[RMDB]
Notes
Conditions: 150 mM KOAc, 10 mM MgCl2 and 150 mM bicine (pH 8.5), 24 C. The record gives the reactivity of an RNA of 177 nucleotides to DMS and 2A3. The 2A3 profile rests on 3,389 reads. For DMS the reverse transcriptase was MarathonRT. Values cover nucleotides 27 to 126. It was measured as part of the RMDB library M2PK50.
RNA sequence: GGGAACGACUCGAGUAGAGUCGAAAACGACGAUAGUUCGCUAUCGUCGCAAGGGCUGUUUUUCACGCUGACUUUCAGCCCCAAACAAAAAAGUCAGCAAAAUAAUCGGUGGCUUCGGCCACCGAAAGAUCAGAACAUGGUUCGCCAUGUUCUGAUCAAAAGAAACAACAACAACAAC
Reactivity to DMS in 0.01 (KOAc 150mM, MgCl2 10mM, bicine 150mM(pH8.5), 24C), signal-to-noise 1, nucleotides 027 to 126: c010g000a000c000g000a000u000a010g010u000u020c200g030c000u000a000u010c000g010u010c000g000c130a060a130g000g010g010c000u000g020u000u000u000u010u000c080a070c090g010c000u010g030a000c000u000u010u000c000a000g010c000c000c000c290a020a010a260c050a000a010a000a000a050a010g000u000c000a010g040c010a010a010a110a120u000a120a150u000c010g020g020u000g000g000c000u000u040c230g020g010c010c000a010c000c000g010a000a020a050
Reactivity to 2A3 in 0.01 (KOAc 150mM, MgCl2 10mM, bicine 150mM(pH8.5), 24C), signal-to-noise 2, nucleotides 027 to 126: c000g000a000c000g000a010u000a000g010u040u070c170g010c140u020a000u010c000g000u000c010g000c020a070a110g010g000g000c000u010g000u000u000u010u010u020c090a090c180g000c000u010g010a010c000u010u020u010c000a000g010c000c000c010c070a000a000a010c030a000a010a020a000a000a000g000u010c000a010g000c000a000a000a010a020u020a000a060u030c000g000g000u000g000g000c020u050u070c190g090g000c020c000a000c000c000g000a000a010a000